An RNA of 177 nucleotides, treated with DMS and 2A3 and read out base by base. Reactivities are given for positions 27 through 126.
[RMDB]
RNA sequence: GGGAACGACUCGAGUAGAGUCGAAAAAGAACUAUGUUAAAGCAUGAAGCCUCCACGUGCUUGCGAAAGCAACCGGAAACGGAAAAGCAUAGUUCAGAGCUGAAGGAGGCACGGCUCAAAAUAAAAAGCUGCUACAACUGUUCGCAGUUGUAGUAGCAAAAGAAACAACAACAACAAC
Reactivity to DMS in 0.01 (KOAc 150mM, MgCl2 10mM, bicine 150mM(pH8.5), 24C), signal-to-noise 3, nucleotides 027 to 126: a060g000a000a010c010u000a000u000g000u000u020a070a210a080g000c000a000u000g010a070a100g040c000c000u010c000c000a300c000g000u010g020c000u030u000g030c000g000a090a080a100g000c000a020a010c000c010g000g000a080a120a100c000g000g010a030a010a110a090g000c000a010u000a020g000u000u000c000a090g000a000g000c000u000g010a070a120g000g000a040g000g000c000a190c020g000g000c000u000c010a110a050a100a070u040a030a080a040a070a090
Reactivity to 2A3 in 0.01 (KOAc 150mM, MgCl2 10mM, bicine 150mM(pH8.5), 24C), signal-to-noise 5, nucleotides 027 to 126: a000g000a000a000c000u000a010u010g120u250u050a180a040a000g000c000a000u000g030a080a010g000c000c000u000c000c000a010c000g000u000g000c000u000u000g000c000g030a050a000a010g000c000a000a000c000c000g010g020a050a020a020c010g010g000a000a030a000a000g000c000a000u000a000g000u000u000c010a010g000a000g000c010u020g020a130a020g020g000a000g000g000c010a010c000g000g000c000u000c000a040a040a010a000u170a020a060a020a010a010
The 2A3 profile rests on 24,166 reads. The DMS profile rests on 5,416 reads.